[RMDB]
RNA sequence: GGGAACGACUCGAGUAGAGUCGAAAAAGCCGUAAUGGCAGGAAGCGAACGAACGUCGGAACAGGGAAACUCAAGUCAAUCUGGGGCCCGUGAAAAGGCGAGUACGGUGUUCGUACCGAGAUCCGACUUGCUUCUCACAUUUCGAUGUGAGAAGCAAAAAAGAAACAACAACAACAAC
Reactivity to 2A3 in 0.01 (KOAc 150mM, MgCl2 10mM, bicine 150mM(pH8.5), 24C), signal-to-noise 2, nucleotides 027 to 126: a000g010c000c000g040u120a110a040u240g000g000c000a000g020g030a020a050g040c030g010a020a000c000g020a040a000c020g030u000c010g010g020a020a030c030a060g030g000g050a070a140a030c000u000c010a140a040g080u040c020a030a160u050c030u020g030g000g040g000c030c000c000g050u050g000a040a060a050a000g050g020c020g010a030g000u060a060c010g010g000u060g090u090u170c030g010u020a050c000c030g010a000g010a030u040c000c000g010a040c000
Reactivity to DMS in 0.01 (KOAc 150mM, MgCl2 10mM, bicine 150mM(pH8.5), 24C), signal-to-noise 3, nucleotides 027 to 126: a120g000c010c000g060u050a120a100u030g000g040c020a060g000g000a130a090g030c020g050a060a000c000g060a050a180c030g010u010c030g010g000a080a060c030a150g000g000g050a140a090a100c060u000c050a060a060g020u010c210a100a130u030c020u000g010g010g000g010c010c000c000g000u010g010a070a120a110a230g020g000c040g010a090g030u000a070c050g020g000u010g000u010u010c050g030u000a010c000c030g000a070g000a070u010c030c000g000a070c080
Annotation: An RNA of 177 nucleotides, treated with 2A3 and DMS and read out base by base. Source: RMDB library RFM100, as collected in RNAgym. The reactions ran in a buffer of 150 mM KOAc, 10 mM MgCl2 and 150 mM bicine (pH 8.5), at 24 C. The DMS profile rests on 4,175 reads. The 2A3 profile rests on 1,454 reads.